[RMDB]
RNA sequence: GGGAACGACUCGAGUAGAGUCGAAAAGCGAAAGUUGCCAUGAGACCGUAACUUUCGUAGUCAUUGAUAAAGGGGCAGGUCUCGCUCUUUUGUCAUUGCGGUUGCCUAGAGGCAUGGUCGUUUACCCAAAAGAGCUCAUUCUUCGGAAUGAGCUCAAGAACAGGGUGAAGUUCGCUUCACCCUGUUCAAAAGAAACAACAACAACAAC
Reactivity to 2A3 in 0.01 (KOAc 150mM, MgCl2 10mM, bicine 150mM(pH8.5), 24C), signal-to-noise 3, nucleotides 027 to 156: g020c000g010a010a010a000g010u010u010g020c020c030a100u130g080a050g040a180c050c030g000u000a000a010c000u010u000u010c010g000u000a020g020u000c030a020u020u070g020a010u030a010a010a000g010g020g000g020c040a030g010g220u070c040u070c120g000c000u010c010u000u010u000u010g000u000c010a020u000u060g030c050g070g020u080u060g010c000c020u120a130g040a150g150g000c030a060u050g030g000u000c010g010u020u030u120a220c010c000c010a000a070a030a050g000a000g000c000u010c000a000u000u000c010u060u070c220g050g000a000a000u010g000a000g010c000u000c000a000a000
Reactivity to DMS in 0.01 (KOAc 150mM, MgCl2 10mM, bicine 150mM(pH8.5), 24C), signal-to-noise 1, nucleotides 027 to 156: g020c020g000a010a060a040g030u000u000g010c030c040a240u000g000a140g000a130c120c110g030u000a020a000c000u010u000u010c000g040u000a030g020u000c040a050u010u000g000a050u010a010a020a030g030g030g000g000c010a120g000g000u010c090u000c070g030c000u010c000u000u000u000u000g010u000c000a050u000u000g040c000g030g070u020u000g000c040c060u000a180g020a170g020g000c000a010u010g050g040u000c050g030u000u000u000a040c020c010c020a030a050a210a120g020a020g000c000u000c000a010u000u000c010u010u000c300g020g000a030a000u000g000a000g020c010u000c010a000a060
Source: RMDB library M2RFPK, as collected in RNAgym. An RNA of 207 nucleotides, treated with 2A3 and DMS and read out base by base. The RNA was probed in 150 mM KOAc, 10 mM MgCl2 and 150 mM bicine (pH 8.5) at 24 C. DMS adducts were read by reverse transcription with MarathonRT. The DMS profile rests on 2,827 reads. For 2A3 the reverse transcriptase was SuperScript II with manganese.